Structure probing data (DMS and 2A3) for a 177-nucleotide construct.
RNA sequence: GGGAACGACUCGAGUAGAGUCGAAAAGGACAAUAGUCCAUCGAACCAUUCAGGUAUGCCUAUCCGUACGAAGGCUAUGAGUUGACAAGCGUACGGAUAUCGUAAGGCAAGGUGAAAUAGCGACGAGGUUUGUACAUUGUUUCGACAAUGUACAAACAAAAGAAACAACAACAACAAC
Reactivity to DMS in 0.01 (KOAc 150mM, MgCl2 10mM, bicine 150mM(pH8.5), 24C), signal-to-noise 5, nucleotides 027 to 126: g000g000a020c020a160a180u050a050g010u010c010c010a090u010c100g020a150a090c060c000a140u050u040c070a060g010g020u010a100u010g010c000c020u000a020u000c000c000g020u000a010c000g000a070a060g010g010c050u000a030u030g000a140g020u010u010g000a110c090a040a090g020c000g000u000a010c000g010g010a010u010a010u010c130g000u040a050a060g000g010c020a010a110g010g010u020g010a020a070a070u010a050g010c030g000a160c080g010a140g010
Reactivity to 2A3 in 0.01 (KOAc 150mM, MgCl2 10mM, bicine 150mM(pH8.5), 24C), signal-to-noise 3, nucleotides 027 to 126: g000g020a030c030a050a280u090a130g000u030c000c000a020u060c070g040a020a010c020c000a000u030u060c010a040g130g020u050a040u130g000c000c050u000a000u030c020c000g010u000a010c010g020a120a000g070g030c060u150a170u170g110a110g210u220u130g080a070c010a070a010g030c030g000u000a000c020g000g000a000u010a010u000c000g040u050a040a000g010g000c000a000a000g060g000u020g040a050a060a060u120a030g060c050g060a060c040g090a020g120
For DMS, 12,847 sequencing reads were counted. Conditions: 150 mM KOAc, 10 mM MgCl2 and 150 mM bicine (pH 8.5), 24 C.